Structure probing data (2A3 and DMS) for a 207-nucleotide construct.

RNA sequence: GGGAACGACUCGAGUAGAGUCGAAAAACGGUCGUACGCGACCGAGGCGCGACUAGGUCGACGGACCGAACAAUGGCAUCCCGCAUUCUGCCAUCCGCCGCGCAGCUUCUUCUCAAACGGUGCGGAAAAAAGUAGGACACCUUCGGGUGUCCUACAACGUACACCAAUAGUUCGCUAUUGGUGUACGAAAAGAAACAACAACAACAAC
Reactivity to 2A3 in 0.01 (KOAc 150mM, MgCl2 10mM, bicine 150mM(pH8.5), 24C), signal-to-noise 3, nucleotides 027 to 156: a000c010g000g000u010c000g020u050a040c220g010c000g130a000c000c000g000a040g010g000c010g000c000g000a000c010u010a020g000g000u000c020g060a190c200g160g040a010c010c000g000a010a000c010a010a020u010g000g000c000a010u080c020c020c000g000c010a030u300u120c020u040g000c000c000a000u010c000c020g010c000c000g000c030g000c010a040g010c060u130u070c020u080u020c040u070c010a090a100a050c030g010g000u010g000c000g000g000a050a020a000a040a000a050g000u010a000g000g000a000c010a000c010c010u030u100c200g060g000g010u000g000u000c000c000u000a000c000a000a000
Reactivity to DMS in 0.01 (KOAc 150mM, MgCl2 10mM, bicine 150mM(pH8.5), 24C), signal-to-noise 2, nucleotides 027 to 156: a070c000g000g000u030c000g020u000a070c180g050c020g010a040c010c000g020a050g010g010c030g000c050g000a050c020u000a130g010g000u020c010g010a150c300g000g010a080c020c020g030a170a040c270a120a040u000g020g020c010a050u000c010c010c000g000c050a070u010u010c030u010g000c000c020a050u000c100c070g030c010c000g000c030g020c010a050g000c060u000u010c070u000u020c000u000c010a060a050a050c100g010g040u000g000c010g000g000a000a020a130a090a150a050g030u020a010g010g000a040c000a000c000c000u000u020c250g110g010g020u000g000u000c000c000u000a000c000a020a100

About this RNA
The data come from the RNA Mapping Database (RMDB), library M2RFPK. DMS adducts were read by reverse transcription with MarathonRT. The reactions ran in a buffer of 150 mM KOAc, 10 mM MgCl2 and 150 mM bicine (pH 8.5), at 24 C.